[RMDB]
About this RNA:
Conditions: 150 mM KOAc, 10 mM MgCl2 and 150 mM bicine (pH 8.5), 24 C. The record gives the reactivity of an RNA of 177 nucleotides to DMS and 2A3.
RNA sequence: GGGAACGACUCGAGUAGAGUCGAAAAUGCAUCUGAAGAAAGAGAUCCUAGACUAUCUUUAGUGGUCCCGAAAGUCAGCUUUGGUUUCUAUGUAGAGCUAAUCAGAGAUUCUUCCUUAAGGAUGCGACAUACGAAUACGAUUCGUCGUAUUCGUAUGAAAAGAAACAACAACAACAAC
Reactivity to DMS in 0.01 (KOAc 150mM, MgCl2 10mM, bicine 150mM(pH8.5), 24C), signal-to-noise 8, nucleotides 027 to 126: u050g010c000a000u000c010u000g010a090a050g000a040a030a020g000a050g020a050u010c040c030u010a090g010a040c070u010a040u010c040u010u000u010a060g010u010g010g000u000c070c010c010g020a040a040a080g010u030c110a100g010c050u000u010u010g000g010u010u010u010c010u000a080u020g030u020a060g010a020g010c070u000a020a050u010c020a060g000a100g000a040u010u000c020u000u000c030c040u000u010a080a190g000g000a010u000g000c000g020a230
Reactivity to 2A3 in 0.01 (KOAc 150mM, MgCl2 10mM, bicine 150mM(pH8.5), 24C), signal-to-noise 9, nucleotides 027 to 126: u140g000c000a000u000c010u070g030a050a030g040a030a080a010g060a010g020a040u020c010c020u040a050g020a030c010u030a050u140c040u070u100u030a080g020u070g100g020u040c020c010c020g060a060a040a000g080u100c060a030g040c050u030u030u040g030g020u070u120u020c050u050a100u150g220u170a040g010a010g080c030u040a030a020u050c020a020g050a010g000a110u070u000c000u020u020c020c010u030u050a050a040g020g000a000u010g000c000g010a010